[RMDB]
Source information: An RNA of 177 nucleotides, treated with 2A3 and read out base by base. Source: RMDB library OK1LIB, as collected in RNAgym. The reactions ran in a buffer of 150 mM KOAc, 10 mM MgCl2 and 150 mM bicine (pH 8.5), at 24 C. For 2A3 the reverse transcriptase was SuperScript II with manganese.

RNA sequence: GGGAACGACUCGAGUAGAGUCGAAAACGUAGGGAGCCCACGAUGCCACUGGGCUGACGACUAGCGACCGUCUCGAUUAGCCCGAGUAUUUUAAAACGGGUUCUGCUUAGUUCGUGACUACGAGACAGUCUAAUCACGUCUUCGGAUGUGGUUAGACAAAAGAAACAACAACAACAAC
Reactivity to 2A3 in 0.01 (KOAc 150mM, MgCl2 10mM, bicine 150mM(pH8.5), 24C), signal-to-noise 1, nucleotides 027 to 126: c060g010u020a000g000g150g100a000g020c030c070c040a040c140g060a150u300g070c140c150a240c100u030g010g010g000c000u020g060a020c000g000a010c020u000a000g000c010g040a020c060c020g020u040c000u010c000g180a230u130u270a130g030c000c120c000g020a010g020u160a200u130u300u170u300a090a200a000a030c000g000g030g080u240u100c070u160g050c010u150u230a070g060u210u190c000g040u050g020a020c030u020a010c020g050a050g020a040c060a030